RNA sequence: GGGAACGACUCGAGUAGAGUCGAAAAAGCUGUCUUCUGCAUCAUUGCUUACUCCCCAGUCUGCAGAGUGUCUUAGAGCAAGUAAGUCUGAAGUAUUGAGUGAAUCUUCUGAAUUGCUUCAGCAAGAUGGCCCUUAUCAGUUCGCUGAUAAGGGCCAAAAAGAAACAACAACAACAAC
Reactivity to DMS in 0.01 (KOAc 150mM, MgCl2 10mM, bicine 150mM(pH8.5), 24C), signal-to-noise 1, nucleotides 027 to 126: a000g000c020u000g000u000c100u010u000c040u000g050c020a060u000c090a150u020u000g010c030u060u000a150c100u000c040c040c000c060a170g020u010c060u000g030c010a030g000a060g030u030g020u010c040u000u000a090g010a120g020c050a060a090g010u010a010a000g030u010c010u000g000a000a010g000u010a100u010u000g000a120g020u000g030a110a080u000c110u000u000c030u000g000a030a070u000u030g020c050u000u000c020a040g030c120a080a050g000a100
This 177-nucleotide RNA was probed chemically with DMS. Reactivities are given for positions 27 through 126.